[RMDB]
This 177-nucleotide RNA was probed chemically with 2A3 and DMS. The 2A3 profile rests on 2,468 reads. Reactivities are rounded to 0.1 and cut off at 0 and 3. DMS (dimethyl sulfate) methylates the pairing face of unpaired adenines and cytosines. The data come from the RNA Mapping Database (RMDB), library OK1LIB. For DMS the reverse transcriptase was MarathonRT.
RNA sequence: GGGAACGACUCGAGUAGAGUCGAAAACAAACAAACCAACCACACUCAGAGCCCAAAUAAACCGAGAUAACCUCAUCUCAUCGGUGGAGAUGAAAAGGACGCAUACGUCCAAAGGGCUCUGACAAAACAACUGCUAUGUCUUCGGACAUAGCAGUUGAAAAGAAACAACAACAACAAC
Reactivity to 2A3 in 0.01 (KOAc 150mM, MgCl2 10mM, bicine 150mM(pH8.5), 24C), signal-to-noise 3, nucleotides 027 to 126: c080a020a120a000c040a070a070a030c030c010a010a050c020c020a090c020a030c090u020c020a000g000a000g000c010c000c030a050a090a080u190a060a080a030c060c090g040a020g020a070u100a070a020c040c030u040c050a040u000c000u000c010a200u120c040g090g020u060g050g040a060g000a000u090g000a050a010a060a070g000g000a010c020g010c100a100u140a300c070g020u000c000c000a000a070a000g000g010g000c000u010c000u000g000a000c000a010a050a000a000
Reactivity to DMS in 0.01 (KOAc 150mM, MgCl2 10mM, bicine 150mM(pH8.5), 24C), signal-to-noise 2, nucleotides 027 to 126: c200a130a100a170c230a100a050a090c030c170a010a170c100c010a130c140a060c270u000c000a000g030a000g000c000c000c000a090a130a050u050a100a030a050c110c000g040a030g010a020u000a120a060c250c130u050c010a100u000c060u000c040a040u020c050g000g030u040g050g000a040g000a140u020g000a000a050a110a240g000g000a040c000g000c300a070u130a240c020g040u000c000c000a020a140a000g000g000g000c000u000c000u000g000a020c140a000a080a040a210